[RMDB]
RNA sequence: GGGAACGACUCGAGUAGAGUCGAAAAGUGGCGGAGCAACACCGGCCUUGGUCCCCGGUGUGAGCGCGCCGGGUGGGCUUCCGCUCUCCGGCCUGCUGCGCGGCGUGGGUGACGAACCGGAGUUGACCCUGCUGGACCCUUUCGAGGGUCCAGCAGGAAAAGAAACAACAACAACAAC
Reactivity to 2A3 in 0.01 (KOAc 150mM, MgCl2 10mM, bicine 150mM(pH8.5), 24C), signal-to-noise 1, nucleotides 027 to 126: g080u080g050g080c030g000g080a070g050c010a000a000c010a010c000c000g000g020c000c060u050u100g090g040u030c000c030c000c000g080g120u010g000u000g080a010g000c000g000c000g000c000c000g010g000g010u240g010g000g000c070u300u010c060c130g000c000u020c000u010c000c000g010g000c000c110u060g020c000u190g150c000g000c000g000g110c070g050u300g000g020g000u140g000a070c040g050a000a000c020c040g000g000a020g010u000u030g010a110c000
The record gives the reactivity of an RNA of 177 nucleotides to 2A3. For 2A3, 657 sequencing reads were counted. 2A3 adducts were read by reverse transcription with SuperScript II with manganese. The RNA was probed in 150 mM KOAc, 10 mM MgCl2 and 150 mM bicine (pH 8.5) at 24 C.